[RMDB]
RNA sequence: GGGAACGACUCGAGUAGAGUCGAAAAAUAAAAGAGAGUAGAUGAUUCCCGUUAAGUGUGUGUGAAUGGGAUGUCGUCACACAACGAAGCGAGAGCGCGGUGAAUCAUUGCAUCCGCUCCAAAAAAACUCAAUAUUUACGUUCGCGUAAAUAUUGAGAAAAGAAACAACAACAACAAC
Reactivity to DMS in 0.01 (KOAc 150mM, MgCl2 10mM, bicine 150mM(pH8.5), 24C), signal-to-noise 4, nucleotides 027 to 126: a050u010a050a060a110a100g000a030g000a030g010u000a300g000a010u010g010a030u000u000c000c000c000g010u000u010a090a130g010u000g020u000g000u000g000u000g000a060a040u010g010g010g000a020u000g000u000c220g020u000c000a010c000a000c010a030a010c020g000a120a120g020c020g010a240g010a180g010c010g010c000g000g010u010g010a020a010u000c010a020u000u000g000c030a010u000c000c010g010c010u000c010c050a000a000a050a050a060a030a100
Reactivity to 2A3 in 0.01 (KOAc 150mM, MgCl2 10mM, bicine 150mM(pH8.5), 24C), signal-to-noise 3, nucleotides 027 to 126: a010u080a000a040a040a000g020a000g010a010g010u050a000g020a030u010g000a000u010u010c000c000c000g000u020u030a080a040g030u120g020u000g000u000g000u000g090a040a030u040g010g000g030a020u050g050u070c090g010u000c010a000c000a000c000a010a050c010g070a080a010g020c020g010a060g010a010g080c010g000c020g000g020u090g020a010a010u030c010a010u010u020g000c000a020u000c000c000g010c000u020c010c000a010a120a010a040a030a040a080